Chemical mapping of a 177-nucleotide RNA with DMS. It was measured as part of the RMDB library OK2TST.
RNA sequence: GGGAACGACUCGAGUAGAGUCGAAAACGCCGGUCUGAUGACGGCCCGGGUGAAGUCGUUGCGGAAGUUUGAGAUCGAGCCGAGGAGGGCAUGUUGCGGGUUGGACCGUUGACAAUAGGCACGCUGGAAAUAGGCCUGAAUUCGUUCAGGCCUAUUUAAAAGAAACAACAACAACAAC
Reactivity to DMS in 0.01 (KOAc 150mM, MgCl2 10mM, bicine 150mM(pH8.5), 24C), signal-to-noise 2, nucleotides 027 to 126: c140g010c010c010g010g000u010c070u000g020a150u000g010a070c050g010g000c030c040c020g010g010g030u010g000a130a100g010u000c020g010u020u000g010c050g000g000a080a100g000u000u010u010g000a100g010a080u000c060g020a140g000c010c040g010a100g000g010a130g000g020g010c060a070u000g000u000u020g040c020g000g000g010u000u010g000g010a130c040c040g000u000u000g000a060c080a070a090u000a080g020g000c040a050c080g010c050u010g000g000
For DMS, 3,324 sequencing reads were counted. For DMS the reverse transcriptase was MarathonRT. The reactions ran in a buffer of 150 mM KOAc, 10 mM MgCl2 and 150 mM bicine (pH 8.5), at 24 C. Reactivities are given for positions 27 through 126.